[RMDB]
RNA sequence: GGGAACGACUCGAGUAGAGUCGAAAAAAAAAACACCCGCAAAGAAAACACACGAGCCUUAACACUCCAGAGAGUUCCGAAACACAAAGUAAAUUUCGAGCUAAGGGUUACAGUCCUUUAAAUCUGGUCCAAGAUAUUAGUUCGCUAAUAUCUUGGAAAAAGAAACAACAACAACAAC
Reactivity to DMS in 0.01 (KOAc 150mM, MgCl2 10mM, bicine 150mM(pH8.5), 24C), signal-to-noise 1, nucleotides 027 to 126: a060a090a210a110a120a140c090a040c000c000c110g080c140a060a040a010g000a070a060a050a030c000a000c000a060c040g020a080g030c010c000u010u030a000a020c090a020c020u000c020c010a040g040a060g010a120g000u020u000c140c030g040a070a030a030c180a050c110a070a090a070g000u050a030a050a100u000u000u000c030g000a030g000c050u020a010a020g000g000g020u000u010a020c100a050g020u000c010c030u000u010u040a020a020a110u020c010u050g000g000
Reactivity to 2A3 in 0.01 (KOAc 150mM, MgCl2 10mM, bicine 150mM(pH8.5), 24C), signal-to-noise 1, nucleotides 027 to 126: a000a000a000a000a000a000c070a080c030c140c000g020c020a080a150a070g060a070a230a000a000c070a000c000a000c020g010a000g040c000c000u060u110a060a000c030a020c000u030c010c000a010g000a000g020a030g020u000u070c130c010g050a030a040a000c090a020c070a120a170a000g060u110a060a180a270u060u060u020c010g000a000g000c010u020a030a080g000g000g000u020u020a030c040a020g000u000c030c000u000u030u150a090a210a060u050c030u040g030g010

Structure probing data (DMS and 2A3) for a 177-nucleotide construct. DMS adducts were read by reverse transcription with MarathonRT. 2A3 adducts were read by reverse transcription with SuperScript II with manganese. The reactions ran in a buffer of 150 mM KOAc, 10 mM MgCl2 and 150 mM bicine (pH 8.5), at 24 C. For 2A3, 492 sequencing reads were counted. 2A3 is a SHAPE reagent: it acylates the 2'-hydroxyl of flexible nucleotides of all four kinds.